[RMDB]
RNA sequence: GGGAACGACUCGAGUAGAGUCGAAAACAAAGCGCAUUCCUUCCAUCAGCAAAAGUGGGGGGUCCUACGCGAGGAACGCCACCCAACGGCAGCAGAUCCAGGUGUAAGCAGCCUGCAGCGCAUCUGCCUUCCAUGCAAUAUUCGUAUUGCAUGGAAGAAAAGAAACAACAACAACAAC
Reactivity to DMS in 0.01 (KOAc 150mM, MgCl2 10mM, bicine 150mM(pH8.5), 24C), signal-to-noise 6, nucleotides 027 to 126: c100a060a090a100g020c040g020c030a120u010u000c010c010u000u000c030c020a020u000c120a140g000c200a060a080a120a150g020u010g000g010g000g000g000g000u020c140c020u000a070c060g030c050g010a140g010g010a090a060c100g010c020c050a100c020c010c020a070a080c130g010g000c060a130g000c040a050g000a050u000c050c020a040g000g010u000g010u010a080a130g010c160a230g030c020c010u000g000c090a070g020c080g010c080a060u000c020u000g000c100
Reactivity to 2A3 in 0.01 (KOAc 150mM, MgCl2 10mM, bicine 150mM(pH8.5), 24C), signal-to-noise 4, nucleotides 027 to 126: c030a010a130a030g020c030g000c040a050u080u080c000c000u040u000c010c010a090u120c060a040g170c090a030a090a060a060g040u060g000g010g000g010g000g000u030c010c020u070a040c060g020c040g080a070g050g050a140a040c040g050c020c000a080c000c000c010a050a050c010g050g000c030a030g010c010a010g020a030u060c010c010a000g020g010u040g040u060a090a040g050c000a000g020c020c020u020g010c030a050g010c050g000c050a020u010c010u020g030c000

An RNA of 177 nucleotides, treated with DMS and 2A3 and read out base by base. As a SHAPE reagent, 2A3 marks flexible, mostly unpaired nucleotides at the ribose 2'-OH. For DMS the reverse transcriptase was MarathonRT. Reactivities are rounded to 0.1 and cut off at 0 and 3.